[RMDB]
RNA sequence: GGGAACGACUCGAGUAGAGUCGAAAAGGGUCGUUGCGAUUACGGGUUGGAUGUCUAAUUGUCCAGGCGGUAAUGAUAGUAUCUUGUACCUGAACCGGUGGCUCACUUUUUCUAAGUAAUGGGAAAGCCAUGUUGAAGGCUUCGGCCUUCAACAUGGAAAAGAAACAACAACAACAAC
Reactivity to DMS in 0.01 (KOAc 150mM, MgCl2 10mM, bicine 150mM(pH8.5), 24C), signal-to-noise 1, nucleotides 027 to 126: g010g010g030u000c030g000u020u000g050c020g010a080u010u000a060c030g000g000g000u010u000g000g000a020u010g010u000c170u000a080a140u000u010g030u000c020c000a110g000g030c090g010g060u000a000a020u000g030a130u000a100g020u000a150u000c020u020u000g030u000a070c030c000u000g000a040a100c050c020g040g020u000g000g020c050u000c030a150c030u000u000u000u000u000c050u030a060a140g010u010a060a080u030g000g000g000a060a050a050g000
The record gives the reactivity of an RNA of 177 nucleotides to DMS. It was measured as part of the RMDB library OK2TST. Values cover nucleotides 27 to 126. The reactions ran in a buffer of 150 mM KOAc, 10 mM MgCl2 and 150 mM bicine (pH 8.5), at 24 C.